Chemical mapping of a 177-nucleotide RNA with 2A3 and DMS. Values cover nucleotides 27 to 126. DMS adducts were read by reverse transcription with MarathonRT. The RNA was probed in 150 mM KOAc, 10 mM MgCl2 and 150 mM bicine (pH 8.5) at 24 C.
RNA sequence: GGGAACGACUCGAGUAGAGUCGAAAAGGGAAACUGAUAGUCUAGAGUGAGGGAGAGGCAGAUGGAAUUGGUGGUGUAGGGGUAAAAUCCGUAGAUAUCACCAAGAAUACCCAUUGCGAAGGCGAUCUGGGGAAUGCAUAUUCGUAUGCAUUCCCCAAAAAGAAACAACAACAACAAC
Reactivity to 2A3 in 0.01 (KOAc 150mM, MgCl2 10mM, bicine 150mM(pH8.5), 24C), signal-to-noise 2, nucleotides 027 to 126: g000g000g030a020a020a060c050u010g050a080u100a040g080u090c020u020a030g020a010g150u120g080a050g020g020g000a070g000a000g070g000c030a040g020a120u020g000g000a050a010u000u000g000g000u000g000g000u020g000u000a000g040g010g000g010u000a050a040a000a020u010c010c000g000u110a080g030a050u010a000u080c000a000c000c000a000a000g030a080a000u110a090c030c010c010a000u000u100g040c090g030a040a040g020g000c010g070a050u000c040
Reactivity to DMS in 0.01 (KOAc 150mM, MgCl2 10mM, bicine 150mM(pH8.5), 24C), signal-to-noise 3, nucleotides 027 to 126: g020g020g000a080a060a060c030u030g000a080u000a050g010u040c070u030a150g000a120g010u000g000a100g000g010g020a130g000a120g000g050c060a110g010a080u000g010g000a140a110u010u000g000g050u000g000g030u000g030u000a100g010g010g020g000u020a080a060a090a100u060c000c010g000u030a070g000a000u010a010u020c000a020c050c020a010a050g000a080a090u050a050c110c010c020a070u000u000g030c050g000a080a100g010g030c090g000a050u020c070
Record summary:
For DMS, 3,839 sequencing reads were counted.